[RMDB]
RNA sequence: GGGAACGACUCGAGUAGAGUCGAAAACUGCACACGCUCUGCCCGAAGCUGUGUUGUGUGGGGAGAACGGACGGAGAGAUCCGUUGAAGCUGGUGCAACUGAGUAUGCGUGAGCAUUUGAAUGCAGGGCGUUUACGGUCCUUCGGGAUCGUAAGCGCAAAAGAAACAACAACAACAAC
Reactivity to DMS in 0.01 (KOAc 150mM, MgCl2 10mM, bicine 150mM(pH8.5), 24C), signal-to-noise 8, nucleotides 027 to 126: c030u000g010c010a050c040a020c040g000c010u000c020u000g000c010c020c020g000a090a050g010c040u020g010u010g000u010u010g010u000g020u020g010g000g000g000a000g000a000a000c000g000g000a000c000g000g000a000g000a010g000a010u000c000c000g010u000u000g010a100a080g010c000u000g000g040u020g010c040a060a090c000u000g000a010g000u000a010u000g000c000g000u000g000a010g000c000a090u010u010u000g010a130a110u000g010c020a030g000g000
Reactivity to 2A3 in 0.01 (KOAc 150mM, MgCl2 10mM, bicine 150mM(pH8.5), 24C), signal-to-noise 6, nucleotides 027 to 126: c000u020g000c000a010c000a000c040g000c000u000c010u050g030c000c000c010g040a030a000g000c030u030g010u010g010u080u050g020u010g000u060g010g010g000g010a020g020a010a000c010g000g010a000c000g020g000a000g000a000g000a050u000c000c010g000u000u020g020a020a000g040c000u030g020g050u070g010c000a010a020c010u030g010a000g010u040a020u050g010c010g020u010g020a010g010c020a050u030u040u130g100a080a010u050g000c020a010g040g030
About this RNA:
Structure probing data (DMS and 2A3) for a 177-nucleotide construct. Source: RMDB library OK1LIB, as collected in RNAgym. Conditions: 150 mM KOAc, 10 mM MgCl2 and 150 mM bicine (pH 8.5), 24 C. For 2A3 the reverse transcriptase was SuperScript II with manganese.